[RMDB]
Description
The record gives the reactivity of an RNA of 207 nucleotides to 2A3. The reactions ran in a buffer of 150 mM KOAc, 10 mM MgCl2 and 150 mM bicine (pH 8.5), at 24 C. For 2A3, 2,915 sequencing reads were counted.

RNA sequence: GGGAACGACUCGAGUAGAGUCGAAAACGAUCAGUACGUUCGCGUACUGAUCGAAGCUACUGGAGACAGUAGCAAGUCUAAGACCUUGUUAGGGGGAAACAAGGAAAAAUGGAGGAAGGUCGGACCUCCAUACUUAGACAACCUCUAACCGACCAAAGACGGGUGGUAUAUUCGUAUACCACCCGUCAAAAGAAACAACAACAACAAC
Reactivity to 2A3 in 0.01 (KOAc 150mM, MgCl2 10mM, bicine 150mM(pH8.5), 24C), signal-to-noise 3, nucleotides 027 to 156: c020g000a000u010c000a000g000u000a000c000g030u030u090c220g000c010g070u020a010c000u000g000a000u000c000g000a000a010g020c000u000a000c000u000g000g000a020g010a020c000a000g000u000a000g000c000a000a010g000u010c000u010a000a030g010a210c010c010u020u020g070u080u210a300g000g000g000g010g000a030a020a000c000a010a000g000g000a020a140a040a030a030u020g000g000a000g020g020a140a220g010g000u000c010g010g090a270c000c000u000c000c010a000u030a020c000u000u000a000g000a000c010a020a130c020c010u050c040u060a020a020c000c000g010a000c000c000a040a000a010